[RMDB]
RNA sequence: GGGAACGACUCGAGUAGAGUCGAAAAGAUAUGGAGGUUCUGAAGCGAUCUUUCGCGAUAAGAAUCCCAUCGGAAACGAUGGAAGAUUCUUUUGACGCGACAGAUCGCUUCAGAACCUCCUAAGUCAUCUAUAAACAUAGUUCGCUAUGUUUAUAGAAAAAGAAACAACAACAACAAC
Reactivity to DMS in 0.01 (KOAc 150mM, MgCl2 10mM, bicine 150mM(pH8.5), 24C), signal-to-noise 1, nucleotides 027 to 126: g010a050u010a300u010g000g020a030g000g010u000u010c000u000g010a010a010g010c000g010a010u000c000u000u000u000c000g000c000g010a120u010a020a020g000a010a010u000c000c000c000a000u010c010g000g000a130a160a240c000g010a000u000g000g000a130a100g000a010u000u000c000u000u000u000u000g000a240c070g010c000g000a000c070a020g000a020u000c000g010c000u000u000c000a000g000a000a000c010c000u000c000c000u000a000a070g020u000c040a110

Notes
Structure probing data (DMS) for a 177-nucleotide construct. The RNA was probed in 150 mM KOAc, 10 mM MgCl2 and 150 mM bicine (pH 8.5) at 24 C. Values cover nucleotides 27 to 126.